About this RNA: An RNA of 177 nucleotides, treated with 2A3 and DMS and read out base by base. The 2A3 profile rests on 809 reads. For DMS, 934 sequencing reads were counted.
RNA sequence: GGGAACGACUCGAGUAGAGUCGAAAAGUAACGCGGUCUCUGCGAUUAAUCCAGGUAGCGGCAAUUCACUCUCUGGUUUUGAGGGCAGCGUGCCGAACCCACACGUCAAAGCCUCUGAUUGGGGGUAGCCAUGAUUUACUUUCGAGUAAAUCAUGGCAAAAGAAACAACAACAACAAC
Reactivity to 2A3 in 0.01 (KOAc 150mM, MgCl2 10mM, bicine 150mM(pH8.5), 24C), signal-to-noise 1, nucleotides 027 to 126: g050u040a030a100c070g020c080g040g020u000c080u000c000u190g040c020g010a000u050u120a090a010u110c020c030a020g040g020u040a000g000c020g010g070c100a080a060u240u190c020a020c000u000c000u010c000u010g000g000u030u070u120u030g090a040g000g040g070c000a000g020c000g090u070g030c000c000g050a100a090c040c040c000a040c040a030c010g210u160c060a050a040a100g000c020c050u040c060u040g220a300u130u210g010g020g000g000g000u000a050
Reactivity to DMS in 0.01 (KOAc 150mM, MgCl2 10mM, bicine 150mM(pH8.5), 24C), signal-to-noise 2, nucleotides 027 to 126: g010u010a040a100c090g060c030g010g020u000c040u000c000u010g010c060g030a150u000u010a050a130u000c000c010a080g020g000u000a050g020c070g010g030c170a110a130u020u020c030a090c040u000c040u000c020u000g030g030u000u000u000u030g010a050g030g000g000c040a040g010c100g000u000g000c010c040g020a120a150c030c000c040a170c130a130c130g000u000c130a050a110a150g020c000c000u000c020u000g000a210u000u000g020g000g000g010g000u000a060

Reactivities are given for positions 27 through 126. For DMS the reverse transcriptase was MarathonRT. The reactions ran in a buffer of 150 mM KOAc, 10 mM MgCl2 and 150 mM bicine (pH 8.5), at 24 C.